[RMDB]
RNA sequence: GGGAACGACUCGAGUAGAGUCGAAAAUUGAUCAAGUUCAGUUGGCUUAGUUCUCUACUGAGGAUGCCUCAUUGUAUUUUGCUGCUGUAACUUCAGAAUGAAAAAGCUCCAUAAAUAUUGUGUUUGCAUGUUCUGUUAGAUUCAUGUUAGGGCAUUGCGUACAUAUGGAGUUCGCUCCAUAUGUACGAAAAGAAACAACAACAACAAC
Reactivity to DMS in 0.01 (KOAc 150mM, MgCl2 10mM, bicine 150mM(pH8.5), 24C), signal-to-noise 3, nucleotides 027 to 156: u020u000g000a050u010c010a130a220g020u000u000c000a020g040u000u010g000g000c040u000u010a090g030u010u000c050u000c020u000a130c110u010g000a080g030g020a080u000g020c010c020u000c050a140u000u010g020u000a090u000u000u000u010g020c030u000g020c010u000g000u000a050a120c080u000u000c030a120g000a120a130u000g000a070a070a080a120a100g010c020u000c030c030a080u000a050a050a130u000a060u010u000g010u000g010u000u000u000g000c020a070u000g020u000u010c030u000g010u000u000a070g010a130u010u000c070a090u000g010u000u000a070g010g010g000c050a150u010u010g010
Reactivity to 2A3 in 0.01 (KOAc 150mM, MgCl2 10mM, bicine 150mM(pH8.5), 24C), signal-to-noise 6, nucleotides 027 to 156: u100u110g040a030u070c040a050a000g030u040u010c040a020g030u090u120g130g000c020u040u100a020g000u170u010c060u000c030u060a070c100u070g020a010g030g030a100u130g110c020c020u020c020a030u060u150g080u060a050u010u090u060u030g020c010u010g000c000u010g050u150a040a050c000u020u050c050a130g080a200a120u100g110a070a100a060a040a020g010c010u040c080c020a070u140a150a180a040u160a100u100u100g020u010g010u050u040u070g010c010a010u020g050u020u020c030u010g140u200u120a060g010a110u090u060c010a020u070g030u050u070a030g000g000g020c060a050u040u140g010